[RMDB]
RNA sequence: GGGAACGACUCGAGUAGAGUCGAAAAGGAUACUGUAGAGAUUAAGAUAACCGUAUCCAAUGAAGGAGCUACAGUAAAUGACUUGAAUAUCAGCAUGAAGUGGAACAGUUCAUUUUUAAAGAAGAGACCUACCCUCCUACUUCGGUAGGAGGGUAGGAAAAGAAACAACAACAACAAC
Reactivity to DMS in 0.01 (KOAc 150mM, MgCl2 10mM, bicine 150mM(pH8.5), 24C), signal-to-noise 2, nucleotides 027 to 126: g000g000a100u000a000c000u000g000u010a000g040a270g000a070u030u010a210a110g020a110u000a100a230c020c090g000u000a020u020c070c010a160a130u010g010a050a200g000g000a120g010c030u000a010c040a060g050u010a030a200a050u000g050a040c010u020u030g000a190a020u020a070u020c160a040g000c050a080u000g040a050a110g020u000g000g010a090a080c110a060g030u000u000c020a050u000u000u020u000u010a010a100a010g050a100a170g000a050g000a060
Reactivity to 2A3 in 0.01 (KOAc 150mM, MgCl2 10mM, bicine 150mM(pH8.5), 24C), signal-to-noise 2, nucleotides 027 to 126: g000g040a000u000a030c000u020g040u090a060g030a040g000a300u110u140a150a100g020a090u150a130a130c010c000g100u000a120u060c080c000a000a010u180g020a090a000g160g020a020g000c000u060a060c000a000g000u000a000a110a060u120g000a040c050u020u020g040a000a000u140a060u230c010a000g110c000a010u100g090a120a030g070u210g180g000a050a000c070a020g040u120u000c020a020u120u000u010u030u120a070a260a030g050a020a000g050a000g000a000

The record gives the reactivity of an RNA of 177 nucleotides to DMS and 2A3. The RNA was probed in 150 mM KOAc, 10 mM MgCl2 and 150 mM bicine (pH 8.5) at 24 C. Values cover nucleotides 27 to 126. For DMS the reverse transcriptase was MarathonRT. For DMS, 1,731 sequencing reads were counted. The 2A3 profile rests on 1,124 reads. Values are in units of 0.01, from 0 to 300, in steps of 10. 2A3 adducts were read by reverse transcription with SuperScript II with manganese. Source: RMDB library OK1LIB, as collected in RNAgym. High DMS reactivity at an A or C suggests that its Watson-Crick edge is free.